[RMDB]
RNA sequence: GGGAACGACUCGAGUAGAGUCGAAAAGCGUACUACGUUCAGCGAAAAUUUUUUUAGCAAAGUGCGAGGUAUGGAUAUGAAUGUCCCAAAUAGGACAUUCGACAUACUACCCACCGCACUUUGCUAAAAAAAUUUUCGAACUACUGAACGUAUCGCAGUACCUGCAAGAGUUCGCUCUUGCAGGUACAAAAGAAACAACAACAACAAC
Reactivity to 2A3 in 0.01 (KOAc 150mM, MgCl2 10mM, bicine 150mM(pH8.5), 24C), signal-to-noise 1, nucleotides 027 to 156: g000c000g020u080a000c050u000a000c050g000u010u000c000a000g010c010g000a000a010a000a030u010u000u000u010u000u000u030a020g040c000a040a000a010g010u000g010c000g010a000g000g000u020a010u020g010g080a220u120a090u300g000a010a000u000g000u030c000c010c000a170a300a030u230a090g000g020a000c000a000u000u000c000g020a000c000a000u000a000c000u050a050c060c060c010a040c000c010g000c000a000c000u000u000u000g000c000u030a000a000a000a000a000a000a000u000u000u000u020c000g000a000a000c000u090a010c000u010g010a000a010c000g000u000a000u010c000g000c000a000
An RNA of 207 nucleotides, treated with 2A3 and read out base by base. It was measured as part of the RMDB library RNAMAK. 2A3 adducts were read by reverse transcription with SuperScript II with manganese. Values cover nucleotides 27 to 156. 2A3 is a SHAPE reagent: it acylates the 2'-hydroxyl of flexible nucleotides of all four kinds. The reactions ran in a buffer of 150 mM KOAc, 10 mM MgCl2 and 150 mM bicine (pH 8.5), at 24 C.